[RMDB]
RNA sequence: GGGAACGACUCGAGUAGAGUCGAAAAUGCGCGCCGAGGACGCGAGCGGCGCGUUCGGCAUCCGCGCGGGCCACGUCGAUUUCGUCACGCUGCUGCGCGCGUCAGUCGUGCGCUGGCGCACCGCCGAUGAUACGUCACGUUUCGACGUGACGUAUCAAAAAGAAACAACAACAACAAC
Reactivity to DMS in 0.01 (KOAc 150mM, MgCl2 10mM, bicine 150mM(pH8.5), 24C), signal-to-noise 4, nucleotides 027 to 126: u000g000c040g020c000g030c020c030g010a100g000g020a030c030g010c020g010a090g020c010g010g020c010g020c020g010u000u000c020g020g010c060a090u000c070c130g010c040g000c050g000g020g020c090c040a080c020g020u000c300g000a070u000u000u000c060g000u000c130a040c020g020c020u020g030c050u000g000c020g010c020g000c020g000u000c030a050g000u010c130g010u010g010c050g010c020u000g000g010c000g010c030a100c060c040g000c010c030g010a210
Reactivity to 2A3 in 0.01 (KOAc 150mM, MgCl2 10mM, bicine 150mM(pH8.5), 24C), signal-to-noise 2, nucleotides 027 to 126: u120g010c000g000c010g000c010c050g020a030g090g010a020c020g020c040g050a020g020c000g010g000c000g000c000g000u010u020c010g010g010c020a030u020c060c030g000c020g000c030g010g050g000c030c010a050c010g020u020c020g040a110u050u080u070c070g060u060c040a020c020g040c040u220g000c020u050g010c010g010c000g000c000g000u010c000a020g100u010c020g060u070g010c050g010c040u020g030g000c010g000c020a020c010c030g010c010c000g020a080
This 177-nucleotide RNA was probed chemically with DMS and 2A3. The 2A3 profile rests on 5,708 reads. 2A3 adducts were read by reverse transcription with SuperScript II with manganese. The reactions ran in a buffer of 150 mM KOAc, 10 mM MgCl2 and 150 mM bicine (pH 8.5), at 24 C. Values are in units of 0.01, from 0 to 300, in steps of 10. The data come from the RNA Mapping Database (RMDB), library OK2TRN. For DMS the reverse transcriptase was MarathonRT.